[RMDB]
RNA sequence: GGGAACGACUCGAGUAGAGUCGAAAAUUAUAACGUGGCUGCGCGGCCUGGAACAGUCCCACAACCUGCUCCAGAAGGACCCAAGGUUGACAGAUCCUUUCAGACCUAUGCUAAGGAAACAAAAUAAACUUAAAGGAGAAUUCGUUCUCCUUUAAGUAAAAGAAACAACAACAACAAC
Reactivity to 2A3 in 0.01 (KOAc 150mM, MgCl2 10mM, bicine 150mM(pH8.5), 24C), signal-to-noise 1, nucleotides 027 to 126: u220u040a140u040a230a010c070g000u010g020g000c000u020g030c020g000c020g010g030c000c000u000g000g020a020a010c000a060g090u010c040c020c010a040c000a040a000c000c000u020g020c010u050c010c000a020g030a160a060g150g000a070c030c000c010a030a020g010g010u000u010g040a020c020a020g070a120u030c000c000u020u070u100c010a020g050a100c000c030u020a040u060g020c010u030a020a030g040g010a040a080a040c040a040a170a040a100u170a050a160
Reactivity to DMS in 0.01 (KOAc 150mM, MgCl2 10mM, bicine 150mM(pH8.5), 24C), signal-to-noise 4, nucleotides 027 to 126: u010u010a120u010a120a110c080g010u000g020g020c020u000g010c080g020c060g020g010c060c010u000g000g000a050a050c070a050g010u000c030c010c070a140c150a060a060c100c000u000g010c080u000c010c020a070g020a140a100g010g000a090c070c040c040a060a080g010g010u000u000g010a080c100a080g010a090u010c020c040u000u000u000c060a090g000a130c040c050u010a040u000g000c070u010a050a060g000g010a070a100a060c070a040a050a090a070u010a070a110